This 177-nucleotide RNA was probed chemically with DMS and 2A3. 2A3 adducts were read by reverse transcription with SuperScript II with manganese. The DMS profile rests on 12,136 reads. The data come from the RNA Mapping Database (RMDB), library OK2TST. For DMS the reverse transcriptase was MarathonRT. Values cover nucleotides 27 to 126.
[RMDB]
RNA sequence: GGGAACGACUCGAGUAGAGUCGAAAACAGCAUGAUGCGUCCCACGGGGCCAUCAGCAAGAAGCCUUGGGUCAACGCCCUCUUCGCCUACGGCAUUGACGUCAUCGGAUCGUCCCGGUGGAUUUGGCCGGUUAAGAUGAUUUCGAUCAUCUUAACCGAAAAGAAACAACAACAACAAC
Reactivity to DMS in 0.01 (KOAc 150mM, MgCl2 10mM, bicine 150mM(pH8.5), 24C), signal-to-noise 8, nucleotides 027 to 126: c170a140g010c020a110u010g010a030u000g010c170g020u000c000c000c020a130c300g050g010g020g010c010c010a010u000c010a040g010c020a100a100g010a080a110g010c090c020u010u000g010g010g010u000c020a040a070c110g010c010c010c080u000c080u010u000c130g010c040c030u000a060c230g000g010c030a080u000u000g000a040c030g010u000c020a050u000c030g010g000a110u000c180g000u000c090c000c010g020g020u000g000g000a110u010u000u000g010g020c120
Reactivity to 2A3 in 0.01 (KOAc 150mM, MgCl2 10mM, bicine 150mM(pH8.5), 24C), signal-to-noise 7, nucleotides 027 to 126: c030a010g040c060a190u050g010a000u030g020c120g040u020c020c010c010a030c160g010g000g000g000c000c000a010u010c010a010g010c020a030a060g090a060a010g010c020c040u090u090g090g020g010u050c030a040a020c060g030c000c030c000u020c040u070u070c050g090c010c020u040a040c030g020g000c040a040u020u100g010a020c030g050u050c010a040u020c020g030g010a050u090c060g080u100c050c010c020g010g000u030g010g050a110u080u040u100g040g010c020